[RMDB]
The data come from the RNA Mapping Database (RMDB), library OK2TST.
Structure probing data (DMS) for a 177-nucleotide construct.
RNA sequence: GGGAACGACUCGAGUAGAGUCGAAAAUCACCGCCUACCCCGGCGAGCACCUGCGCUUCGGCCGCCAGCGCCUGCGGGAAGACAGCGGCCAGUGGCAGGACACCAACAUCGAGGCGCUGAACUGGAACACGCAUAGGGGAUUCGUCCCCUAUGCGUGAAAAGAAACAACAACAACAAC
Reactivity to DMS in 0.01 (KOAc 150mM, MgCl2 10mM, bicine 150mM(pH8.5), 24C), signal-to-noise 2, nucleotides 027 to 126: u010c060a230c110c000g000c000c020u000a280c040c020c090c170g020g000c020g000a090g020c090a090c030c000u000g000c040g010c000u000u000c150g020g000c000c020g000c040c070a060g000c300g000c020c020u000g030c070g050g000g030a070a040g000a040c300a170g000c000g000g010c000c000a000g040u000g000g000c000a040g020g010a130c080a110c080c000a110a110c110a020u000c090g000a060g000g020c010g020c080u000g010a090a170c110u010g000g010a170a070
The RNA was probed in 150 mM KOAc, 10 mM MgCl2 and 150 mM bicine (pH 8.5) at 24 C. DMS adducts were read by reverse transcription with MarathonRT.